[RMDB]
RNA sequence: GGGAACGACUCGAGUAGAGUCGAAAAGAGGCGCUGCUGCUGCCCGCCUCGCUGAUCGGCAUCAUCCGCGACCUCAUCGAACGGCGUUCCGGCGUCGAGGCGAAACUGGCUGCCGCGGGUCGGGAGCUGGUGCGGGCGCGAGAUAAUCUCGAAAGGCCUCCACCCAGUAAUUCGUUACUGGGUGGAGAAAAGAAACAACAACAACAAC
Reactivity to 2A3 in 0.01 (KOAc 150mM, MgCl2 10mM, bicine 150mM(pH8.5), 24C), signal-to-noise 1, nucleotides 027 to 156: g060a000g000g030c060g030c110u150g040c130u130g090c110u170g020c100c000c020g000c000c010u010c020g040c040u100g020a090u030c010g000g010c010a030u030c000a000u000c070c000g030c030g010a180c010c000u010c040a060u050c050g130a170a150c060g050g030c070g050u130u110c050c030g020g000c000g060u220c010g010a020g020g000c070g050a070a070a080c070u070g150g030c070u120g040c020c020g000c060g110g030g040u060c020g000g000g010a000g020c080u180g000g020u060g030c050g000g030g020c020g010c020g000a080g000a060u080a010a020u000c060u010c010g000a000a060a000g000g010c000